An RNA of 207 nucleotides, treated with 2A3 and DMS and read out base by base. For DMS the reverse transcriptase was MarathonRT. For 2A3, 5,612 sequencing reads were counted.

RNA sequence: GGGAACGACUCGAGUAGAGUCGAAAAUGAUGAUGUCGACCUUAACCUCCAGAAUGAAGAUACUUCAGGACUUAGUCUGAGAAGGCUACCAAGUCAUGAUGGAGAAAAACGUGAAACCACUGAUUCAGUUCAUUGCAAAUUCAUUCUACCAAACCUAAGGACUAGCUAUAUUCGUAUAGCUAGUCCUAAAAGAAACAACAACAACAAC
Reactivity to 2A3 in 0.01 (KOAc 150mM, MgCl2 10mM, bicine 150mM(pH8.5), 24C), signal-to-noise 6, nucleotides 027 to 156: u080g010a010u010g010a010u060g020u090c040g050a070c020c010u040u080a030a060c010c000u000c010c010a010g020a070a010u030g000a020a040g040a070u150a160c030u030u030c040a040g020g010a020c030u060u110a040g010u000c010u010g030a040g020a200a020g010g000c000u030a060c020c080a100a020g020u020c000a000u020g040a040u030g000g020a020g050a080a030a000a010a000c030g030u040g030a070a040a030c050c020a020c070u070g030a110u080u060c020a020g140u070u040c030a030u060u150g040c040a020a050a060u050u050c020a020u050u050c020u080a080c040c040a150a040a020c080c080u190a040
Reactivity to DMS in 0.01 (KOAc 150mM, MgCl2 10mM, bicine 150mM(pH8.5), 24C), signal-to-noise 2, nucleotides 027 to 156: u010g010a080u010g010a120u000g020u010c040g040a160c060c020u010u020a120a130c080c010u000c020c040a110g010a180a080u010g010a040a070g030a110u000a050c020u000u000c040a210g010g060a040c020u010u010a030g020u000c010u000g010a300g000a120a080g010g000c020u000a040c100c040a110a040g030u000c010a040u010g010a200u000g050g020a070g000a040a050a050a070a100c040g020u000g000a070a030a070c060c040a300c060u010g010a090u000u000c090a080g000u000u000c030a050u000u000g000c010a030a050a140u000u000c030a050u000u000c020u000a140c040c060a040a100a080c030c030u020a140